Source information:
Structure probing data (DMS and 2A3) for a 207-nucleotide construct. 2A3 adducts were read by reverse transcription with SuperScript II with manganese. For 2A3, 2,020 sequencing reads were counted. The DMS profile rests on 4,461 reads. Reactivities are given for positions 27 through 156.

RNA sequence: GGGAACGACUCGAGUAGAGUCGAAAAAUUAAGAUUGACGACUCCGAGGGUGAGAAAUUUGCCGAGUAUGAACGUGGCACACGCGUUGAUGCGGCCGUAUCUGUCAACGCCGGCAUUUCAUACACGAAUCGGUUUACGGGCUAUGUCGUGGAACGCCCAAUCGUAACGUUUUCGAACGUUACGAUUGAAAAGAAACAACAACAACAAC
Reactivity to DMS in 0.01 (KOAc 150mM, MgCl2 10mM, bicine 150mM(pH8.5), 24C), signal-to-noise 2, nucleotides 027 to 156: a110u020u010a060a120g010a210u000u010g010a270c020g030a090c020u000c010c030g000a120g000g010g050u020g020a160g010a100a090a070u000u020u000g020c020c000g020a130g000u000a070u010g000a040a030c220g000u000g010g030c040a090c080a080c020g020c030g020u000u000g020a050u010g030c060g010g000c030c140g010u010a090u020c060u000g000u000c000a020a030c020g020c020c050g030g000c000a070u000u010u000c020a030u000a070c020a130c090g020a090a100u000c030g020g040u000u010u000a070c040g030g000g000c020u000a110u000g010u000c030g020u000g020g010a050a090c080g000c040c050
Reactivity to 2A3 in 0.01 (KOAc 150mM, MgCl2 10mM, bicine 150mM(pH8.5), 24C), signal-to-noise 4, nucleotides 027 to 156: a030u180u120a110a010g100a130u040u080g050a010c030g020a020c000u000c020c020g020a020g000g070g030u070g000a100g050a030a130a050u170u160u090g010c000c010g010a040g020u060a060u080g040a100a010c220g130u070g030g000c050a030c000a030c120g000c000g030u060u100g050a050u140g020c040g040g010c050c040g080u130a160u120c070u090g050u020c010a010a000c010g020c030c020g020g000c000a000u000u030u000c030a050u070a040c020a000c050g120a120a100u060c010g000g000u010u010u070a070c020g020g010g000c050u070a050u150g040u050c040g050u080g020g040a050a020c030g030c020c000